The record gives the reactivity of an RNA of 177 nucleotides to 2A3 and DMS. 2A3 adducts were read by reverse transcription with SuperScript II with manganese. For DMS the reverse transcriptase was MarathonRT. The RNA was probed in 150 mM KOAc, 10 mM MgCl2 and 150 mM bicine (pH 8.5) at 24 C. For 2A3, 3,758 sequencing reads were counted.
RNA sequence: GGGAACGACUCGAGUAGAGUCGAAAAACAAUUGUACUGGUGGUAGUGAAAUUAGAGAUCUUCUUUGUGUACAAUCCUUUAAUGGUAUUAAAGUUUUGCCUCCUAUUUUGUCUGAAUCUCAAAUUUCCUGUUAACAAAGAUUCGUCUUUGUUAACAGAAAAGAAACAACAACAACAAC
Reactivity to 2A3 in 0.01 (KOAc 150mM, MgCl2 10mM, bicine 150mM(pH8.5), 24C), signal-to-noise 4, nucleotides 027 to 126: a000c020a020a060u080u080g030u070a050c050u060g080g020u030g030g030u040a060g010u020g080a060a070a050u110u090a080g030a000g020a120u020c010u070u000c000u060u180u080g070u020g000u040a040c010a010a070u040c010c010u060u110u150a090a070u160g100g000u100a070u070u100a110a060a050g000u000u040u060u090g040c000c010u000c000c010u060a120u090u110u050u030g050u020c040u040g070a130a090u020c010u020c070a090a090a080u040u040u020c010
Reactivity to DMS in 0.01 (KOAc 150mM, MgCl2 10mM, bicine 150mM(pH8.5), 24C), signal-to-noise 6, nucleotides 027 to 126: a080c060a120a080u010u010g010u000a050c080u000g010g020u000g000g010u000a050g020u010g000a070a070a090u010u000a100g020a090g000a050u000c050u000u010c030u000u000u010g020u000g000u010a070c050a040a050u000c060c010u000u000u000a040a040u010g000g020u000a300u000u000a030a050a070g000u000u000u000u000g010c060c030u000c050c030u000a040u000u000u000u000g000u000c060u000g010a070a070u000c020u000c040a050a050a130u010u000u000c040